[RMDB]
RNA sequence: GGGAACGACUCGAGUAGAGUCGAAAAGCCUAACAGUUCGCUGUUAGGCAAAUGCACAGACUACGCAACUGUGAAAAACACAACAGAAGUGUCUAUGCGAGGAUCGUUGCGUCUUCGGACGCAACAAAAGCAUGCUAGUGUUCGCACUAGCAUGCUUAAAAGAAACAACAACAACAAC
Reactivity to DMS in 0.01 (KOAc 150mM, MgCl2 10mM, bicine 150mM(pH8.5), 24C), signal-to-noise 2, nucleotides 027 to 126: g000c000c000u000a000a000c000a000g000u000u000c230g030c000u010g000u000u000a000g000g050c000a000a020a010u010g010c010a010c030a000g010a010c010u020a050c050g000c150a120a100c040u000g000u000g010a030a080a080a070a160c140a080c140a130a030c110a040g010a070a130g000u000g010u000c000u000a040u010g000c020g000a110g040g000a100u020c230g000u000u000g000c000g010u000c020u000u010c180g000g010a010c000g010c000a010a000c000a010a070
Reactivity to 2A3 in 0.01 (KOAc 150mM, MgCl2 10mM, bicine 150mM(pH8.5), 24C), signal-to-noise 2, nucleotides 027 to 126: g000c000c000u000a020a010c000a020g050u090u090c140g070c130u010g000u000u000a000g000g000c000a000a020a010u130g000c000a000c000a010g030a040c090u170a020c190g000c040a080a060c080u020g030u050g110a120a020a000a010a010c130a030c050a170a000c010a000g080a110a010g090u030g000u000c000u040a030u040g010c030g030a080g000g060a090u240c140g000u010u010g010c000g000u000c010u020u010c080g140g000a000c000g000c010a000a000c000a000a010